Background
Conditions: 150 mM KOAc, 10 mM MgCl2 and 150 mM bicine (pH 8.5), 24 C. Chemical mapping of a 177-nucleotide RNA with DMS and 2A3. 2A3 adducts were read by reverse transcription with SuperScript II with manganese. In probing experiments dimethyl sulfate is read out at A N1 and C N3, which are open when not base-paired. Source: RMDB library 15KREP, as collected in RNAgym.
[RMDB]
RNA sequence: GGGAACGACUCGAGUAGAGUCGAAAAGGAGACUGCUGGACUCUCCGCCCAAGCCGAGAUGGGCCUCAGUUCCGAGCGAAGAGCCGAACCGGGAAGAGGAAGCGCCCGAGAGGGAGCCAAUGCCAAACAACAUAUCAAUGUUCGCAUUGAUAUGUUGAAAAGAAACAACAACAACAAC
Reactivity to DMS in 0.01 (KOAc 150mM, MgCl2 10mM, bicine 150mM(pH8.5), 24C), signal-to-noise 3, nucleotides 027 to 126: g000g020a010g000a020c080u010g010c070u000g020g000a170c170u000c010u010c020c040g000c000c020c040a110a100g010c080c060g000a110g010a090u000g000g010g000c010c030u010c040a060g000u000u000c040c050g010a130g010c020g000a100a100g000a170g000c040c040g000a070a080c060c040g010g000g000a130a070g010a080g000g010a200a120g000c060g020c000c020c020g010a160g030a180g000g000g010a070g000c040c110a030a070u010g000c050c040a060a110a270
Reactivity to 2A3 in 0.01 (KOAc 150mM, MgCl2 10mM, bicine 150mM(pH8.5), 24C), signal-to-noise 1, nucleotides 027 to 126: g030g020a010g000a020c060u080g050c050u060g080g030a050c010u000c010u000c010c010g000c010c000c010a020a010g020c030c010g100a100g010a070u080g020g040g000c010c010u030c020a040g000u050u000c030c020g000a010g020c010g040a080a100g020a020g020c000c030g010a030a000c050c000g000g000g000a060a050g030a070g080g000a040a050g050c020g020c030c050c000g060a070g000a030g030g010g010a000g000c000c010a080a060u130g030c020c020a050a070a160